RNA sequence: GGGAACGACUCGAGUAGAGUCGAAAACAUGUGUACUUCGGUACACAUGAAAUGACCGCCAUUAUUGGCUAAGGCUAGACGGACGGCCGGGUCAAAUGCCGAAAAUCGUUGCGUUCGCGCAACGAAACGAUACCUAAAGCUUCGGCUUUAGGUAUCGAAAAGAAACAACAACAACAAC
Reactivity to 2A3 in 0.01 (KOAc 150mM, MgCl2 10mM, bicine 150mM(pH8.5), 24C), signal-to-noise 4, nucleotides 027 to 126: c000a000u010g000u000g010u010a000c010u020u080c210g110g010u000a000c000a000c000a000u000g000a010a010a010u110g010a010c010c000g110c000c030a090u160u170a170u300u280g040g000c090u100a230a110g000g000c010u020a040g070a150c030g020g000a010c010g010g000c010c000g010g000g010u010c010a000a010a050u110g000c010c000g000a100a020a000a030u030c000g000u010u000g010c010g010u010u050c260g000c010g000c080a000a000c000g000a000a000a000
Reactivity to DMS in 0.01 (KOAc 150mM, MgCl2 10mM, bicine 150mM(pH8.5), 24C), signal-to-noise 3, nucleotides 027 to 126: c010a000u010g000u000g000u010a000c010u000u020c180g040g010u000a000c000a000c000a010u000g000a020a110a100u000g000a040c000c000g050c010c010a040u010u010a160u010u000g010g010c020u020a070a030g040g000c010u000a080g010a140c030g000g010a030c040g000g000c020c010g000g000g010u000c000a030a030a040u010g010c000c010g010a210a100a100a120u000c000g000u010u000g020c000g020u010u020c240g010c010g000c020a000a000c000g000a000a050a080
This 177-nucleotide RNA was probed chemically with 2A3 and DMS. 2A3 adducts were read by reverse transcription with SuperScript II with manganese. For DMS the reverse transcriptase was MarathonRT. Reactivities are rounded to 0.1 and cut off at 0 and 3. The RNA was probed in 150 mM KOAc, 10 mM MgCl2 and 150 mM bicine (pH 8.5) at 24 C. The DMS profile rests on 3,161 reads.